[RMDB]
RNA sequence: GGGAACGACUCGAGUAGAGUCGAAAAGAUAUGGACUGACCCUACUUUUGACGAGCCCUCGGAAACGAGGCGCUCGAUAAGUAGCAGUCCUAAGUCAAACCUGGAUGACGUUCGCGUCAUCCAGGAACCACAAGGUAACCUUCGGGUUACCUUGUGGAAAAGAAACAACAACAACAAC
Reactivity to DMS in 0.01 (KOAc 150mM, MgCl2 10mM, bicine 150mM(pH8.5), 24C), signal-to-noise 1, nucleotides 027 to 126: g000a000u000a300u020g000g020a000c020u000g010a190c130c280c020u000a000c010u000u000u000u000g020a180c080g000a020g000c030c010c000u060c010g010g000a030a010a150c020g010a000g030g000c250g060c000u000c000g000a020u000a010a030g000u010a030g000c070a010g000u000c000c000u020a000a030g000u010c030a100a040a140c000c000u000g010g000a010u000g020a010c010g060u010u000c300g010c000g000u030c000a000u000c030c000a000g000g000a030a080
Reactivity to 2A3 in 0.01 (KOAc 150mM, MgCl2 10mM, bicine 150mM(pH8.5), 24C), signal-to-noise 1, nucleotides 027 to 126: g000a040u020a000u100g000g000a000c000u020g110a140c100c080c030u000a030c030u180u150u140u300g300a050c020g000a000g010c000c000c030u000c000g000g010a040a090a040c000g040a030g000g030c070g000c010u000c000g000a000u030a040a000g010u000a000g070c000a000g020u030c020c000u010a090a030g040u060c070a070a040a150c000c000u040g000g000a000u000g000a020c040g000u090u020c300g000c020g170u030c000a020u010c010c000a010g000g000a000a040